[RMDB]
RNA sequence: GGGAACGACUCGAGUAGAGUCGAAAAGAUGAUAGUCGCACUGUCCUUAGACAGUGCACGAAAGAAUCUUAGUUCUUAGUGUGUCUAAGGACACACUGAAGUGUAAGCACUUCUCGUGGCUAUCAUACAUAGGUGUGGGAUUCGUUUCAUAUCUAUGAAAAGAAACAACAACAACAAC
Reactivity to DMS in 0.01 (KOAc 150mM, MgCl2 10mM, bicine 150mM(pH8.5), 24C), signal-to-noise 9, nucleotides 027 to 126: g010a040u000g010a010u000a000g010u000c030g020c010a120c100u000g000u000c000c170u010u020a050g010a010c010a120g010u030g010c000a010c020g000a070a050a010g000a020a010u010c200u040u030a110g010u000u000c000u000u000a210g000u000g010u000g000u000c000u000a060a070g000g000a010c000a010c150a030c100u010g000a000a010g010u000g010u030a130a160g020c020a010c000u000u000c010u000c100g010u050g010g000c000u000a000u000c000a000u000a120
Reactivity to 2A3 in 0.01 (KOAc 150mM, MgCl2 10mM, bicine 150mM(pH8.5), 24C), signal-to-noise 9, nucleotides 027 to 126: g150a000u010g000a000u000a000g010u010c010g000c010a020c040u020g000u000c020c020u030u020a020g000a000c020a030g150u130g140c000a000c000g010a010a000a000g020a000a000u090c140u250u190a120g040u060u000c000u000u010a010g000u010g010u010g000u000c000u010a030a040g060g000a000c000a000c000a000c010u030g000a000a000g000u010g010u120a080a040g130c010a000c000u000u000c010u020c060g010u020g000g000c000u000a000u000c000a000u020a020